The record gives the reactivity of an RNA of 177 nucleotides to DMS and 2A3. DMS adducts were read by reverse transcription with MarathonRT. Source: RMDB library TTRDES, as collected in RNAgym. The DMS profile rests on 10,410 reads. For 2A3, 20,243 sequencing reads were counted. Conditions: 150 mM KOAc, 10 mM MgCl2 and 150 mM bicine (pH 8.5), 24 C.
RNA sequence: GGGAACGACUCGAGUAGAGUCGAAAAGAUAUGGACGACUAGGCUAGCCUUAGUGUCGGAAACGACAUGAGGGCUUGGACCCUACUCGUCCUAAGUCAAAAUCGAUUCCUCUUCGGAGGAAUCGAAACUGAAUGCUUAAGUUCGCUUAAGCAUUCAGAAAAGAAACAACAACAACAAC
Reactivity to DMS in 0.01 (KOAc 150mM, MgCl2 10mM, bicine 150mM(pH8.5), 24C), signal-to-noise 5, nucleotides 027 to 126: g000a030u000a220u000g000g010a010c000g020a020c100u000a010g020g000c030u000a020g040c000c000u000u000a300g020u000g010u000c000g010g000a050a060a100c000g010a010c000a000u000g000a150g010g000g020c020u000u000g010g000a080c300c020c000u000a010c150u000c000g020u010c000c000u000a000a050g000u010c020a090a080a150a210u000c000g010a020u000u000c000c000u000c000u000u010c260g010g000a010g000g010a010a000u000c000g010a000a040a150
Reactivity to 2A3 in 0.01 (KOAc 150mM, MgCl2 10mM, bicine 150mM(pH8.5), 24C), signal-to-noise 3, nucleotides 027 to 126: g020a020u060a030u130g000g000a000c000g000a010c020u010a000g000g030c040u040a020g010c010c010u020u060a040g010u010g000u010c000g010g020a040a060a020c000g010a000c010a010u090g010a120g030g000g000c000u010u070g020g030a010c020c000c000u000a010c030u000c010g010u000c010c000u020a050a010g020u020c020a020a010a000a300u050c000g000a000u010u000c000c000u020c000u050u090c300g190g000a000g000g000a000a000u000c000g000a010a000a000